RNA sequence: GGGAACGACUCGAGUAGAGUCGAAAACCAGCGGCAACCAGGAGCGGGUGGUCACGGUGAUCGCUCACGAGCUGGCCCACCAGUGGUUUGGGAACCUGGUGACCUUGGAGUGGUGGAAUGACCUGUGUCGUCGCGAAGGAUUCGUCCUUCGCGACGAAAAAGAAACAACAACAACAAC
Reactivity to DMS in 0.01 (KOAc 150mM, MgCl2 10mM, bicine 150mM(pH8.5), 24C), signal-to-noise 1, nucleotides 027 to 126: c010c000a130g030c040g000g070c010a120a060c070c000a030g030g020a180g000c070g020g020g040u000g000g020u000c020a080c130g000g000u000g000a010u000c100g020c060u000c010a050c070g000a160g010c050u000g000g010c070c070c100a040c030c010a030g000u020g020g020u000u000u010g000g000g000a120a090c010c000u000g010g010u000g000a100c060c040u000u000g010g000a070g000u020g030g000u000g010g010a050a090u000g010a050c010c050u000g000u010g030
This 177-nucleotide RNA was probed chemically with DMS. The DMS profile rests on 1,304 reads. The data come from the RNA Mapping Database (RMDB), library OK2TRN. Conditions: 150 mM KOAc, 10 mM MgCl2 and 150 mM bicine (pH 8.5), 24 C. DMS adducts were read by reverse transcription with MarathonRT.